[RMDB]
Source: RMDB library TTRDEL, as collected in RNAgym. This 177-nucleotide RNA was probed chemically with 2A3 and DMS. The reactions ran in a buffer of 150 mM KOAc, 10 mM MgCl2 and 150 mM bicine (pH 8.5), at 24 C. The DMS profile rests on 6,334 reads.

RNA sequence: GGGAACGACUCGAGUAGAGUCGAAAAGAUAUGGACAGUGAACAUGCCGAUGAAACUACUCGGAAACGAGUAGUGGAGGAACUACAUGAUCUGUCCUAAGUCAAACGAACCGGUUCGCCGGUUCGAACUUAAGUAACACCUUCGGGUGUUACUUAAGAAAAGAAACAACAACAACAAC
Reactivity to 2A3 in 0.01 (KOAc 150mM, MgCl2 10mM, bicine 150mM(pH8.5), 24C), signal-to-noise 4, nucleotides 027 to 126: g000a010u040a040u080g000g000a000c010a010g030u040g230a200a060c040a060u100g070c030c040g230a300u050g000a000a010a010c010u010a000c000u000c010g020g000a060a020a020c010g000a000g000u000a000g000u000g010g000a000g000g020a080a070c130u190a030c210a080u090g020a100u080c000u030g000u000c010c000u000a060a000g020u030c030a140a040a100c020g000a000a010c000c010g000g060u080u070c300g050c050c000g000g000u010u000c000g010a010a010
Reactivity to DMS in 0.01 (KOAc 150mM, MgCl2 10mM, bicine 150mM(pH8.5), 24C), signal-to-noise 5, nucleotides 027 to 126: g000a040u000a300u010g010g000a010c020a010g010u000g010a140a130c040a020u000g010c030c000g010a110u000g010a260a110a020c000u000a010c000u000c000g020g000a080a070a110c000g000a000g010u000a010g010u000g000g000a080g010g000a070a060c080u010a240c020a020u010g010a070u000c000u000g010u000c000c000u000a030a120g000u010c050a070a120a270c020g010a010a000c000c000g000g000u000u010c260g020c000c000g010g000u000u000c000g010a060a110